[RMDB]
RNA sequence: GGGAACGACUCGAGUAGAGUCGAAAAUCAUUGGCUUCGCUGCGCGCUGCGUUGCCUAGGCUUCAGAUGCUUCGUACUGUUGCCAACGUUGCAAUUUCCAAACGGUAAUGCGAAAGUGUGCAAACAAGUCAUCUUGAAACUUCGGUUUCAAGAUGACAAAAGAAACAACAACAACAAC
Reactivity to DMS in 0.01 (KOAc 150mM, MgCl2 10mM, bicine 150mM(pH8.5), 24C), signal-to-noise 2, nucleotides 027 to 126: u020c070a120u010u000g000g000c020u000u000c010g010c130u010g010c010g000c060g040c010u000g000c020g000u000u000g050c000c020u010a160g000g010c080u000u010c070a000g000a150u020g000c110u010u010c140g010u000a150c080u000g020u010u000g010c020c020a040a110c180g010u020u010g010c060a060a110u000u000u000c020c000a010a030a130c150g000g000u000a040a030u000g000c050g010a070a060a080g020u000g020u000g020c040a130a060a240c170a040a090
Reactivity to 2A3 in 0.01 (KOAc 150mM, MgCl2 10mM, bicine 150mM(pH8.5), 24C), signal-to-noise 2, nucleotides 027 to 126: u080c020a030u040u110g000g000c010u020u020c020g000c050u100g000c010g010c000g000c030u020g000c010g020u020u030g000c000c010u010a040g020g000c000u030u000c010a010g050a240u100g060c040u100u100c070g050u070a070c020u020g040u040u030g020c010c000a050a040c100g050u060u060g040c060a110a190u060u000u060c030c000a220a090a000c060g000g050u070a060a010u030g030c020g030a080a020a020g040u030g000u020g000c000a010a050a050c010a040a040
Chemical mapping of a 177-nucleotide RNA with DMS and 2A3. For DMS, 1,303 sequencing reads were counted.